[RMDB]
RNA sequence: GGGAACGACUCGAGUAGAGUCGAAAACUUGCGGCUGAUCUUGUCCACUUCAUCAAUAUAGACGAUGCCGCGCUGCGCGCGCUCCACAUUAUAAUCGGCAGCCUGAAGCAGCUUCAGGAUGAUGUUAGCAUUAGGAAAAUUUCGAUUUUCCUAAUGCAAAAGAAACAACAACAACAAC
Reactivity to 2A3 in 0.01 (KOAc 150mM, MgCl2 10mM, bicine 150mM(pH8.5), 24C), signal-to-noise 7, nucleotides 027 to 126: c020u030u080g010c010g020g000c010u060g030a160u040c020u090u110g040u070c050c030a070c060u130u080c030a100u020c020a040a160u140a060u060a270g040a040c040g030a050u070g010c020c000g020c010g000c040u060g020c030g010c010g010c010g020c010u010c040c000a040c000a090u170u220a150u150a270a090u110c060g030g000c050a010g020c000c000u020g010a060a010g020c090a020g030c000u030u040c020a030g050g020a050u080g010a010u060g080u110u050a020
Reactivity to DMS in 0.01 (KOAc 150mM, MgCl2 10mM, bicine 150mM(pH8.5), 24C), signal-to-noise 8, nucleotides 027 to 126: c050u000u000g010c030g010g000c010u010g000a110u000c030u000u000g010u000c080c070a100c120u000u000c070a070u000c060a100a110u010a120u000a060g000a050c050g010a090u010g000c030c010g010c030g020c070u000g010c070g010c090g010c160g010c020u000c020c030a060c110a060u000u000a090u010a110a110u010c090g010g020c060a070g010c010c030u000g010a040a070g020c110a090g020c050u000u000c050a050g000g000a060u000g000a050u010g010u010u000a170